[RMDB]
RNA sequence: GGGAACGACUCGAGUAGAGUCGAAAAGGUGGCUCGUUGUGGCGGCACUUCUCUCGUGAGAACGAGUCACCGAUUUAGCAUGUUCGUCCUACGAUGUCGGUGGGCUACCUGUAGGACGUUCAUGCGAGGGAAGGUUUUCCUUCGGGAAGACCUUCCCAAAAGAAACAACAACAACAAC
Reactivity to DMS in 0.01 (KOAc 150mM, MgCl2 10mM, bicine 150mM(pH8.5), 24C), signal-to-noise 4, nucleotides 027 to 126: g010g020u000g020g000c010u000c010g020u000u010g000u020g020g010c020g010g010c220a090c140u020u030c080u010c050u030c050g000u000g000a100g010a030a010c010g000a010g000u000c010a010c000c010g010a010u010u020u020a140g000c000a000u010g010u000u000c000g010u000c000c000u000a000c000g010a130u040g020u010c030g020g010u030g000g010g000c020u010a050c160c080u030g000u020a010g000g000a010c000g010u000u000c000a000u000g000c000g000a110
Reactivity to 2A3 in 0.01 (KOAc 150mM, MgCl2 10mM, bicine 150mM(pH8.5), 24C), signal-to-noise 9, nucleotides 027 to 126: g000g000u000g000g000c000u000c010g000u010u030g140u150g160g000c010g010g050c060a070c180u300u090c060u030c010u030c040g020u050g070a230g020a040a000c000g000a000g000u000c000a000c000c000g000a000u000u010u050a010g000c000a000u000g000u010u000c000g000u000c000c000u000a000c010g070a060u110g080u130c070g040g190u300g140g130g020c040u080a100c030c040u100g000u000a000g000g000a000c000g000u000u000c000a000u000g000c000g000a080